Chemical mapping of a 177-nucleotide RNA with DMS and 2A3. For DMS, 3,012 sequencing reads were counted. In probing experiments dimethyl sulfate is read out at A N1 and C N3, which are open when not base-paired.

RNA sequence: GGGAACGACUCGAGUAGAGUCGAAAAUUGAAUCAAUGGAAGGUGCCUCCUUCACGCCUUCCGGCAUCACCCGUGAAGAAGUGACCGGCUCGCGGGUUUAUGGCUGGAAAGGUAAACCUCGUGCCGCGAAUGGGUACAGAUUCGUCUGUACCCAUUCAAAAGAAACAACAACAACAAC
Reactivity to DMS in 0.01 (KOAc 150mM, MgCl2 10mM, bicine 150mM(pH8.5), 24C), signal-to-noise 3, nucleotides 027 to 126: u000u010g020a080a100u000c130a060a110u020g000g010a030a030g000g010u000g010c050c070u010c030c020u000u000c040a180c080g010c020c010u000u000c020c010g000g000c080a050u000c300a040c030c010c000g020u000g010a100a050g010a050a100g000u000g020a080c240c030g000g000c000u000c040g020c070g010g000g000u010u010u000a010u000g000g020c000u010g010g010a030a050a040g000g000u000a030a040a050c040c020u000c060g000u000g020c030c050g010c200
Reactivity to 2A3 in 0.01 (KOAc 150mM, MgCl2 10mM, bicine 150mM(pH8.5), 24C), signal-to-noise 2, nucleotides 027 to 126: u030u030g030a020a100u090c050a050a080u140g050g000a020a000g030g020u020g030c000c040u060c040c000u020u020c030a020c040g000c010c010u000u000c000c000g020g000c020a040u040c030a020c000c010c000g050u080g100a220a110g040a070a010g060u050g140a100c010c060g040g000c010u010c020g000c050g000g020g000u040u030u020a020u020g080g040c050u060g020g020a120a050a020g000g010u020a040a010a030c010c020u010c020g000u050g000c010c000g040c020